[RMDB]
RNA sequence: GGGAACGACUCGAGUAGAGUCGAAAAGAAAGAAAGUACUGAAAGUAUUGUGGGAAAUCAUGUGUAAAUCAUUGACCGUUCCUGCGCUGGUAAGAAUAAAAUUUUAGUCCAGACACCACCAGUAUAACCAAUCUAGUGACCUUCGGGUCACUAGAAAGUUAUCGGUAGCGUUCGCGCUACCGAUAACAAAAGAAACAACAACAACAAC
Reactivity to 2A3 in 0.01 (KOAc 150mM, MgCl2 10mM, bicine 150mM(pH8.5), 24C), signal-to-noise 1, nucleotides 027 to 156: g020a030a050a000g080a060a130a000g000u070a000c010u060g020a160a070a000g080u070a070u300u110g000u100g000g000g040a000a000a020u040c000a110u060g010u020g000u020a070a000a000u090c000a030u040u120g010a010c070c020g000u070u060c010c090u130g060c000g000c020u020g000g000u020a060a040g020a130a000u140a100a180a090a150u020u050u110u080a020g000u070c020c000a000g060a090c010a010c040c010a000c020c000a000g000u030a000u030a120a020c150c040a090a070u030c000u000a000g000u010g000a000c010c000u000u060c280g180g000g060u000c000a000c000u000a000g030a000a000a000